[RMDB]
The data come from the RNA Mapping Database (RMDB), library M2RFPK. An RNA of 207 nucleotides, treated with 2A3 and DMS and read out base by base. The 2A3 profile rests on 2,979 reads. For 2A3 the reverse transcriptase was SuperScript II with manganese. Conditions: 150 mM KOAc, 10 mM MgCl2 and 150 mM bicine (pH 8.5), 24 C.
RNA sequence: GGGAACGACUCGAGUAGAGUCGAAAAUUGAAAUUGAACCGUCCUGUUAUCGAAAGAUAGGCAGAAGAUACGAAAUGUGUGACAGCAUGGGAAGUACAGGCAGACCGUGGUUCCCUUGAGUAUCUUAAUUAGGGGGACGAGUUCGCUCGUCCCCCAACCUAAUAGUAUUCUUCGGAAUACUAUUAGGAAAAGAAACAACAACAACAAC
Reactivity to 2A3 in 0.01 (KOAc 150mM, MgCl2 10mM, bicine 150mM(pH8.5), 24C), signal-to-noise 3, nucleotides 027 to 156: u100u090g040a000a030a050u090u100g040a050a050c040c030g050u070c010c010u020g030u070u030a050u050c040g040a080a020a030g030a030u040a010g080g000c020a010g020a110a000g010a010u000a000c020g010a010a050a070u060g030u010g030u050g070a020c020a020g020c000a030u020g000g000g030a030a020g110u030a060c050a070g030g090c080a050g100a090c030c020g020u010g040g090u030u010c000c000c000u010u010g000a000g000u000a020u010c020u000u080a140a140u130u190a090g000g000g000g020g000a010c000g000a000g030u070u060c190g030c030u000c000g000u000c000c000c000c000c000a000a000
Reactivity to DMS in 0.01 (KOAc 150mM, MgCl2 10mM, bicine 150mM(pH8.5), 24C), signal-to-noise 3, nucleotides 027 to 156: u000u000g010a070a100a100u000u010g000a100a190c040c020g020u000c030c020u010g040u000u010a080u000c040g020a190a150a200g020a050u010a020g020g000c010a050g010a020a060g000a060u000a040c040g000a060a060a090u010g030u000g020u000g010a160c190a220g010c020a060u000g010g000g010a060a050g010u000a060c030a080g010g020c100a180g010a200c010c030g000u010g030g000u000u000c010c010c000u010u000g000a130g010u000a020u000c040u000u000a040a130u000u000a160g000g010g010g050g060a020c000g000a020g000u000u000c180g020c010u000c000g020u000c000c000c000c000c000a000a010